[RMDB]
RNA sequence: GGGAACGACUCGAGUAGAGUCGAAAACAUUACCCUAUGCAAAGUCUGCAUCAGGCGGGGUAGUGUGCUGCUCGGGCACAACUGGUUGAGAGCUGGGCCGCUCUCCUGAUGAGCCCAUGGCAGGGCGGAUAACUUAUAGGUUCGCCUAUAAGUUAUCAAAAGAAACAACAACAACAAC
Reactivity to 2A3 in 0.01 (KOAc 150mM, MgCl2 10mM, bicine 150mM(pH8.5), 24C), signal-to-noise 1, nucleotides 027 to 126: c010a010u020u030a020c000c000c010u060a080u120g060c030a140a120a120g110u060c080u070g050c040a100u070c080a180g160g020c060g010g000g010g000u010a010g020u010g020u030g050c010u010g000c000u020c040g000g010g000c010a020c010a070a070c050u070g060g180u240u170g040a010g000a010g000c030u110g020g240g060c050c020g000c010u000c000u030c000c010u070g020a110u030g020a010g010c010c000c000a020u060g030g000c020a000g020g020g010c090g040
Reactivity to DMS in 0.01 (KOAc 150mM, MgCl2 10mM, bicine 150mM(pH8.5), 24C), signal-to-noise 9, nucleotides 027 to 126: c010a020u000u000a010c000c000c000u000a110u000g020c070a070a090a170g010u000c080u010g020c120a090u010c180a070g010g010c080g000g010g000g010u000a010g010u000g010u000g010c020u000g000c020u000c300g000g000g000c010a060c020a050a040c020u000g000g010u010u000g000a030g000a030g000c010u000g010g010g020c170c140g000c000u000c000u000c010c010u000g000a070u000g000a090g020c000c000c010a070u010g000g000c020a030g000g010g020c160g010
Structure probing data (2A3 and DMS) for a 177-nucleotide construct. Reactivities are given for positions 27 through 126. For 2A3, 16,011 sequencing reads were counted.